[RMDB]
RNA sequence: GGGAACGACUCGAGUAGAGUCGAAAAGAUAUGGAUUUAGACAUGCAUAAUAAUCGGAAACGAUUACUAUGCAACAGCUAACUGUCCUAAGUCAAAACGUUUGGGUAUCUUCGGAUACCCAAACGAAUCUAAAGCACCAGUUCGCUGGUGCUUUAGAAAAAGAAACAACAACAACAAC
Reactivity to DMS in 0.01 (KOAc 150mM, MgCl2 10mM, bicine 150mM(pH8.5), 24C), signal-to-noise 2, nucleotides 027 to 126: g010a040u000a300u020g000g010a070u000u000u000a010g020a060c040a250u000g000c000a000u000a000a030u000a000a000u000c000g010g020a090a120a170c000g000a000u000u010a000c090u000a000u000g000c000a030a060c290a130g000c030u000a000a050c300u000g010u000c030c000u020a030a100g000u000c040a070a080a160a180c010g000u000u000u000g000g000g010u000a010u010c000u010u000c180g040g000a000u000a000c000c000c000a000a000a000c000g010a030a040

Source: RMDB library TTRDEL, as collected in RNAgym. Chemical mapping of a 177-nucleotide RNA with DMS. DMS adducts were read by reverse transcription with MarathonRT. Values are in units of 0.01, from 0 to 300, in steps of 10. The RNA was probed in 150 mM KOAc, 10 mM MgCl2 and 150 mM bicine (pH 8.5) at 24 C. For DMS, 1,509 sequencing reads were counted.